Source information: Chemical mapping of a 177-nucleotide RNA with DMS. High DMS reactivity at an A or C suggests that its Watson-Crick edge is free. It was measured as part of the RMDB library OK2TST. DMS adducts were read by reverse transcription with MarathonRT. Conditions: 150 mM KOAc, 10 mM MgCl2 and 150 mM bicine (pH 8.5), 24 C.
[RMDB]
RNA sequence: GGGAACGACUCGAGUAGAGUCGAAAAUGGAGGCGUUCUAUAUUGUGUCCGGUGUCGCGUAGCUGGUGCAAUAAUCGUGUUUCCCAUUCGGCGCCGGCCCUGCGGUUGCGUGCCUGCUGUGAAGCCACUACCACCCCCUAUUCGUAGGGGGUGGUAGAAAAGAAACAACAACAACAAC
Reactivity to DMS in 0.01 (KOAc 150mM, MgCl2 10mM, bicine 150mM(pH8.5), 24C), signal-to-noise 1, nucleotides 027 to 126: u010g010g020a110g020g020c050g020u010u000c060u000a160u020a070u010u030g010u000g020u010c020c000g000g040u000g000u000c110g010c180g010u000a170g020c030u010g010g040u070g000c030a070a020u000a050a120u000c060g010u000g020u010u000u000c000c010c020a190u010u000c150g000g020c000g000c030c040g010g000c030c010c080u000g020c130g000g000u000u000g000c080g020u000g030c020c030u010g020c070u010g000u000g030a110a090g000c040c000a230